[RMDB]
RNA sequence: GGGAACGACUCGAGUAGAGUCGAAAAGGGGUCUAAGCGGGAGACGUGUGUAGCUUUUGACGCUCUGAAGCCUCCACGGAGCGAUAAGCUAUAGACGUCUUUGAUCGCUUAGACGGAGGCACCCAAACAACCUCUACAGUUCGCUGUAGAGGUUGAAGUAAAUUAUUGUCUUCGGACAAUAAUUUACAAAAGAAACAACAACAACAAC
Reactivity to DMS in 0.01 (KOAc 150mM, MgCl2 10mM, bicine 150mM(pH8.5), 24C), signal-to-noise 1, nucleotides 027 to 156: g000g000g060g020u000c010u000a000a040g000c000g000g000g010a020g010a030c000g030u000g000u000g000u000a030g000c020u000u000u000u010g030a300c030g000c020u000c000u000g000a030a160g010c030c000u000c000c000a300c010g000g010a020g030c010g020a070u000a030a040g020c000u010a020u000a050g010a030c020g030u000c000u010u000u000g010a090u000c000g000c000u000u000a000g000a030c000g010g000a020g170g040c000a140c000c000c000a090a180a260c010a020a010c010c010u000c010u000a010c000a030g000u010u000c300g050c000u000g000u000a000g000a000g010g000u000u000g000a030a220
Reactivity to 2A3 in 0.01 (KOAc 150mM, MgCl2 10mM, bicine 150mM(pH8.5), 24C), signal-to-noise 6, nucleotides 027 to 156: g020g000g010g010u010c000u000a000a000g000c010g000g000g000a010g000a000c000g010u120g050u000g010u060a000g010c020u140u240u300u210g050a040c030g000c000u000c000u010g020a090a030g000c000c000u010c000c000a020c010g010g000a000g010c010g040a060u140a300a000g000c000u010a000u010a010g170a070c000g000u020c000u100u080u000g000a000u000c000g000c000u000u000a000g010a000c010g000g000a000g000g000c000a030c000c000c010a030a120a050c000a000a000c000c000u010c000u010a000c000a010g040u040u120c150g140c140u000g000u000a000g000a000g000g000u000u000g000a000a000